[RMDB]
RNA sequence: GGGAACGACUCGAGUAGAGUCGAAAAGAUAUGGAACGGUACCAGGUGAUGACCUAAAUCGGAAACGAUUUAGCAAGCCUGCGUACACGUUCCUAAGUCAAAAUGCCCUGACGUUCGCGUCAGGGCAGACCUAUAAUUUGUUCGCAAAUUAUAGGUCAAAAGAAACAACAACAACAAC
Reactivity to 2A3 in 0.01 (KOAc 150mM, MgCl2 10mM, bicine 150mM(pH8.5), 24C), signal-to-noise 4, nucleotides 027 to 126: g030a010u090a040u200g000g000a000a010c010g000g010u010a000c020c000a010g010g030u050g060a300u170g060a070c010c020u010a010a000a000u010c000g010g000a040a070a050c010g000a010u000u010u000a010g010c010a070a110g000c000c000u020g030c080g000u000a000c010a000c000g010u000u010c000c000u000a020a010g030u010c030a010a010a080a300u150g000c000c000c000u010g000a000c000g030u080u130c300g020c010g170u000c000a000g010g000g010c010a010
Reactivity to DMS in 0.01 (KOAc 150mM, MgCl2 10mM, bicine 150mM(pH8.5), 24C), signal-to-noise 7, nucleotides 027 to 126: g010a060u010a300u010g000g010a000a000c000g020g010u000a000c010c000a010g010g020u010g000a130u010g000a150c300c010u000a000a010a000u000c000g000g010a160a140a220c010g010a010u000u000u000a010g000c030a080a230g000c010c000u000g000c300g020u000a000c010a060c010g010u000u000c000c000u000a020a130g000u000c060a060a050a120a240u000g000c010c010c000u000g000a020c000g020u010u020c280g020c010g000u000c000a000g000g000g010c010a000

Description: Source: RMDB library TTRDES, as collected in RNAgym. Chemical mapping of a 177-nucleotide RNA with 2A3 and DMS. The reactions ran in a buffer of 150 mM KOAc, 10 mM MgCl2 and 150 mM bicine (pH 8.5), at 24 C. For DMS the reverse transcriptase was MarathonRT. Reactivities are given for positions 27 through 126. The 2A3 profile rests on 24,212 reads.